[RMDB]
RNA sequence: GGGAACGACUCGAGUAGAGUCGAAAAGUUCAUCCCCUGAUCAAGGAUGCCCGAAACGGUGAGGCGGAAAGCAAAUUAAAUAACGUCAACCCAUCGGGACGGUUGGACAGUUAAGAAGUGAGGAUUCAAAAGAUCGAACCGUUCGCGGUUCGAUCAACCUAUAGUAACCGUUCGCGGUUACUAUAGGAAAAGAAACAACAACAACAAC
Reactivity to 2A3 in 0.01 (KOAc 150mM, MgCl2 10mM, bicine 150mM(pH8.5), 24C), signal-to-noise 6, nucleotides 027 to 156: g030u060u060c020a030u040c020c000c000c000u070g050a140u070c020a010a060g030g010a050u070g010c010c000c010g030a070a070a040c090g000g010u050g030a150g050g000c010g020g050a070a070a030g110c150a060a070a100u180u160a110a070a090u170a090a010c010g000u010c020a010a030c010c010c000a030u030c040g000g000g010a020c010g010g020u020u040g030g020a030c030a070g020u050u090a090a060g040a070a020g050u090g060a060g050g080a080u110u060c100a090a030a030a030g010a000u000c000g000a000a000c010c000g020u030u040c160g010c000g070g000u000u000c000g010a000u000c000a000a000
Reactivity to DMS in 0.01 (KOAc 150mM, MgCl2 10mM, bicine 150mM(pH8.5), 24C), signal-to-noise 2, nucleotides 027 to 156: g000u000u010c030a120u020c010c010c010c030u010g020a140u000c070a090a080g000g000a090u010g010c070c020c000g000a080a170a100c120g010g050u010g000a140g050g030c020g000g020a070a100a110g010c100a080a050a160u000u000a090a070a100u000a090a180c010g030u010c010a020a070c020c030c020a300u000c000g040g010g030a060c130g020g000u000u000g000g010a090c050a080g010u000u000a090a070g020a050a100g030u000g010a080g020g010a130u010u000c030a050a070a110a160g000a040u010c000g000a010a010c020c010g050u000u000c250g040c030g000g040u000u020c010g030a000u000c010a010a030

Source: RMDB library M2RFPK, as collected in RNAgym. An RNA of 207 nucleotides, treated with 2A3 and DMS and read out base by base. The 2A3 profile rests on 5,075 reads. The reactions ran in a buffer of 150 mM KOAc, 10 mM MgCl2 and 150 mM bicine (pH 8.5), at 24 C. For DMS the reverse transcriptase was MarathonRT. High DMS reactivity at an A or C suggests that its Watson-Crick edge is free.